RNA sequence: GGGAACGACUCGAGUAGAGUCGAAAACAAACUCAGAUGCUGGUUUUGAAACUUGCGCCGUCCUCAAAACAGCGCUCGAUGGAAUGAAGUAUCACUUUGGAACAACCACACUCGAGCAAGGCUGGACCAUGUGAGAUCCGUUCGCGGAUCUCACAUGAAAAGAAACAACAACAACAAC
Reactivity to DMS in 0.01 (KOAc 150mM, MgCl2 10mM, bicine 150mM(pH8.5), 24C), signal-to-noise 2, nucleotides 027 to 126: c030a050a080a080c110u000c080a060g000a000u000g000c040u000g000g000u000u030u000u010g000a090a050a070c060u050u040g000c050g030c040c020g010u000c000c050u040c070a050a020a040a110c010a050g000c030g020c060u030c030g020a020u030g000g000a070a140u010g030a060a000g000u050a050u030c080a050c070u000u030u020g020g030a100a060c150a030a080c160c020a150c120a080c150u000c020g010a020g020c040a160a030g000g030c000u000g020g000a040c120
Reactivity to 2A3 in 0.01 (KOAc 150mM, MgCl2 10mM, bicine 150mM(pH8.5), 24C), signal-to-noise 3, nucleotides 027 to 126: c020a010a040a030c010u030c040a040g020a150u070g010c030u050g040g080u040u030u080u090g080a070a080a020c000u010u060g020c020g000c020c030g020u030c010c030u100c030a060a030a010a020c000a020g010c030g000c000u020c020g050a080u060g020g090a080a050u140g010a090a040g060u090a120u270c070a100c110u100u070u120g090g020a160a070c010a050a040c020c010a010c000a000c030u030c000g020a000g030c020a070a000g160g000c010u030g030g000a020c000